[RMDB]
Chemical mapping of a 177-nucleotide RNA with DMS and 2A3. It was measured as part of the RMDB library OK2TRN. The reactions ran in a buffer of 150 mM KOAc, 10 mM MgCl2 and 150 mM bicine (pH 8.5), at 24 C. The 2A3 profile rests on 700 reads. High 2A3 reactivity points to a flexible backbone, as in loops and unpaired stretches. For DMS, 2,544 sequencing reads were counted.
RNA sequence: GGGAACGACUCGAGUAGAGUCGAAAAGUUAUAUGCAGUCCAACAAACCUUGAGGAGUUAGUCAUUGGAUUUCUGGCUUCGGAAGGUGCCAUUUUAAAGCGAGAUGAAUUAAAAUCUGUGCUGAUUGAAACAAGACAAGGUUCGCCUUGUCUUGUUUAAAAGAAACAACAACAACAAC
Reactivity to DMS in 0.01 (KOAc 150mM, MgCl2 10mM, bicine 150mM(pH8.5), 24C), signal-to-noise 3, nucleotides 027 to 126: g030u000u000a070u010a070u020g010c060a110g030u000c030c050a070a090c110a080a130a050c040c030u000u000g010a250g000g000a040g010u000u000a030g020u020c070a170u010u000g020g010a250u000u010u000c040u000g000g000c020u000u000c020g010g040a030a050g000g010u010g020c100c090a070u010u000u000u010a060a140a060g000c040g000a020g010a010u000g000a080a090u010u000a110a120a100a020u000c020u000g000u020g030c000u010g000a130u000u010g000
Reactivity to 2A3 in 0.01 (KOAc 150mM, MgCl2 10mM, bicine 150mM(pH8.5), 24C), signal-to-noise 1, nucleotides 027 to 126: g020u060u060a210u030a080u290g000c000a000g000u060c040c000a050a040c040a040a190a020c000c000u050u050g060a030g030g000a030g010u060u040a010g030u100c050a180u080u220g180g010a110u180u000u000c040u030g050g000c040u030u000c040g120g040a010a010g030g000u000g070c060c040a050u100u120u100u270a050a080a030g010c030g050a030g010a010u040g100a040a240u070u130a120a050a000a060u000c010u050g120u080g000c020u090g050a180u010u160g000